[RMDB]
RNA sequence: GGGAACGACUCGAGUAGAGUCGAAAAGUUUUGAAUAUCCAUUUUUCUCUCCAGGUUGCUGCUAGUAAAUGUCGCUGUUGAUCUUGAAUCCAUGCUCAGCGCCGUCGUUGUAGUCAUACUCGGCAUACUACUUGGAUACUUUCGAGUAUCCAAGUAGAAAAGAAACAACAACAACAAC
Reactivity to 2A3 in 0.01 (KOAc 150mM, MgCl2 10mM, bicine 150mM(pH8.5), 24C), signal-to-noise 2, nucleotides 027 to 126: g020u060u100u140u150g090a110a020u090a040u190c050c000a020u140u100u000u080u030c020u000c010u000c070c010a040g020g030u070u070g010c020u040g000c020u020a010g000u120a170a100a080u120g040u040c000g000c010u020g040u110u030g020a110u040c000u050u050g050a150a080u020c060c020a060u060g030c020u030c060a010g010c010g010c040c010g000u040c030g060u060u040g060u020a040g020u040c020a000u020a090c030u000c030g060g000c020a010u030a100
Reactivity to DMS in 0.01 (KOAc 150mM, MgCl2 10mM, bicine 150mM(pH8.5), 24C), signal-to-noise 4, nucleotides 027 to 126: g020u000u010u000u010g000a130a090u000a100u000c050c040a090u010u000u000u010u010c010u000c030u010c040c060a100g000g020u000u010g010c030u000g000c030u000a080g000u010a050a070a080u010g010u000c040g020c040u000g010u010u000g010a060u000c040u000u010g010a080a120u010c080c060a060u010g010c050u010c050a080g020c090g020c060c040g010u000c070g020u000u000g010u010a070g010u020c100a070u000a070c050u000c020g000g000c110a090u010a170